Source: RMDB library OK3TST, as collected in RNAgym. Structure probing data (DMS and 2A3) for a 207-nucleotide construct.
RNA sequence: GGGAACGACUCGAGUAGAGUCGAAAACGCGACGCCCUCAACAACUACACCCGGCGACAGCUGAUUCUCUUUUGGGAAGAGGCGCAAGCGGCUGAGCGCCGCGAGCAGGCCCGAGACAUUAACGCGGUGAUGUACGGAAUGGUGGGAGGCACGGACGCUUCCGUAUGUUAUUCGUAACAUACGGAAGAAAAGAAACAACAACAACAAC
Reactivity to DMS in 0.01 (KOAc 150mM, MgCl2 10mM, bicine 150mM(pH8.5), 24C), signal-to-noise 1, nucleotides 027 to 156: c020g030c000g050a170c020g020c000c010c050u000c010a070a100c040a080a110c010u000a150c020a100c000c020c000g030g040c020g040a130c090a190g020c010u000g000a250u000u110c000u000c000u000u000u000u000g010g000g010a040a070g010a300g000g030c070g020c060a090a250g000c010g000g000c020u010g000a150g050c080g010c000c000g020c010g000a130g030c020a110g030g040c000c010c020g040a140g000a090c040a050u000u030a040a110c030g000c050g040g050u000g010a090u010g010u010a080c040g020g000a070a110u000g010g010u000g000g010g000a090g000g000c060a040c000g080g010a070c070g000
Reactivity to 2A3 in 0.01 (KOAc 150mM, MgCl2 10mM, bicine 150mM(pH8.5), 24C), signal-to-noise 2, nucleotides 027 to 156: c100g020c070g060a050c080g050c010c000c000u060c040a070a130c020a060a010c020u110a030c020a050c020c020c000g120g010c040g110a060c070a050g020c040u030g050a130u170u010c010u010c000u030u200u140u190g080g010g030a060a050g050a070g070g000c010g010c050a030a030g010c010g010g020c000u070g070a110g100c100g000c010c010g000c010g000a000g000c020a010g070g030c020c010c020g050a050g020a030c050a060u110u140a110a010c050g020c010g060g020u050g030a190u040g030u050a060c110g050g070a100a080u070g010g050u020g000g010g010a140g010g000c000a010c100g070g030a010c060g020

For DMS the reverse transcriptase was MarathonRT. The RNA was probed in 150 mM KOAc, 10 mM MgCl2 and 150 mM bicine (pH 8.5) at 24 C.